[RMDB]
Source information: Structure probing data (2A3 and DMS) for a 177-nucleotide construct.
RNA sequence: GGGAACGACUCGAGUAGAGUCGAAAAGAUUUUCAUCGGUGGAAUGGGUGUCCUGUUAAGUAUUAGUGGUCAGCCUGAAACGGUAAAUGACUUACCUUUGCGGGUUAAGUUUUUAUUAGACAAAAGCGCUGAUGCAGUAGUUCGCUACUGCAUCAGCAAAAGAAACAACAACAACAAC
Reactivity to 2A3 in 0.01 (KOAc 150mM, MgCl2 10mM, bicine 150mM(pH8.5), 24C), signal-to-noise 1, nucleotides 027 to 126: g100a020u000u000u000u300c160a120u030c090g080g000u010g000g010a150a140u120g000g000g110u050g020u070c000c030u090g030u150u070a000a000g070u000a140u300u250a010g000u000g050g000u000c000a000g000c010c000u000g100a060a000a000c040g050g000u110a100a090a090u070g000a000c000u000u050a000c000c000u080u300u180g080c100g000g030g000u010u040a010a000g000u000u000u000u000u000a120u100u010a100g000a020c110a140a050a060a000g040c050
Reactivity to DMS in 0.01 (KOAc 150mM, MgCl2 10mM, bicine 150mM(pH8.5), 24C), signal-to-noise 1, nucleotides 027 to 126: g000a060u000u000u000u010c020a000u010c070g040g000u020g000g000a100a020u000g010g000g020u000g010u000c020c030u030g020u000u080a110a020g010u040a010u000u000a150g020u000g040g030u040c000a090g000c030c070u070g000a040a000a040c180g000g000u040a000a030a000u120g070a030c070u010u000a040c010c000u000u020u130g020c290g060g000g020u000u070a000a020g000u000u010u000u000u030a000u030u000a030g040a130c050a070a030a150a050g040c160

Record summary
The data come from the RNA Mapping Database (RMDB), library OK1LIB. For DMS the reverse transcriptase was MarathonRT. Values cover nucleotides 27 to 126.